[RMDB]
Notes
Conditions: 150 mM KOAc, 10 mM MgCl2 and 150 mM bicine (pH 8.5), 24 C. Structure probing data (DMS) for a 177-nucleotide construct.

RNA sequence: GGGAACGACUCGAGUAGAGUCGAAAAUCUACGUGCCAGGCGCAGUCCUAAUCACCUUACAUACAUUAACACAAUCUUCUCAAUGGCCCUAUAAGAUAGGUUCUUUUUUUUUUUUUGAGAUAGAGUCCAGCUGUAGUGAAUUCGUUCACUACAGCUGAAAAGAAACAACAACAACAAC
Reactivity to DMS in 0.01 (KOAc 150mM, MgCl2 10mM, bicine 150mM(pH8.5), 24C), signal-to-noise 2, nucleotides 027 to 126: u000c030u000a040c110g020u000g010c040c070a040g000g020c060g040c060a050g010u000c020c030u000a030a100u000c050a050c050c070u000u000a080c070a060u020a080c110a070u010u020a070a080c070a070c110a030a060u010c040u000u000c020u000c030a080a050u010g000g010c130c000c010u000a070u030a050a090g010a300u000a020g010g010u010u000c010u000u000u010u000u000u000u000u000u000u000u040u000u000g010a050g020a030u010a020g010a100g010u010c060
It was measured as part of the RMDB library OK2TRN. High DMS reactivity at an A or C suggests that its Watson-Crick edge is free. The DMS profile rests on 1,491 reads. Reactivities are rounded to 0.1 and cut off at 0 and 3.